RNA sequence: GGGAACGACUCGAGUAGAGUCGAAAAGGCUCCUGGCUUCCCUCAGUCUACAUACCUGGCAGUUGCAAGGGAGCCACCGGGAGGGUCUGUGGUACAGCUCCCAGCACCUGGUGGGAGAUGAGUCCUAAACUUGAAAAUGGUUCGCCAUUUUCAAGUUAAAAGAAACAACAACAACAAC
Reactivity to 2A3 in 0.01 (KOAc 150mM, MgCl2 10mM, bicine 150mM(pH8.5), 24C), signal-to-noise 3, nucleotides 027 to 126: g060g000c020u050c030c040u050g060g010c000u120u110c010c020c000u030c040a050g020u010c030u100a100c040a120u200a120c040c030u050g040g020c020a080g010u110u080g050c040a080a080g030g000g000a010g030c000c000a010c000c020g010g000g030a130g080g040g040u040c070u120g090u090g040g060u130a130c050a040g000c020u030c010c000c000a010g050c000a020c000c030u150g120g150u050g010g140g010a060g010a030u100g020a020g050u030c000c000u070a090
Reactivity to DMS in 0.01 (KOAc 150mM, MgCl2 10mM, bicine 150mM(pH8.5), 24C), signal-to-noise 6, nucleotides 027 to 126: g020g020c020u010c010c040u000g010g010c040u000u000c010c010c020u000c070a100g010u010c020u000a080c110a100u000a090c110c070u000g010g020c060a100g010u010u000g010c060a120a090g000g010g010a070g020c010c050a020c070c040g000g010g000a100g000g000g010u000c030u010g010u010g010g000u000a250c110a090g000c050u000c000c000c000a100g010c060a090c070c070u010g010g010u000g000g000g010a070g010a040u010g010a150g000u000c020c020u000a090
The data come from the RNA Mapping Database (RMDB), library OK2TRN.
An RNA of 177 nucleotides, treated with 2A3 and DMS and read out base by base.
2A3 adducts were read by reverse transcription with SuperScript II with manganese.
DMS adducts were read by reverse transcription with MarathonRT.
Values cover nucleotides 27 to 126.
The reactions ran in a buffer of 150 mM KOAc, 10 mM MgCl2 and 150 mM bicine (pH 8.5), at 24 C.
The DMS profile rests on 7,568 reads.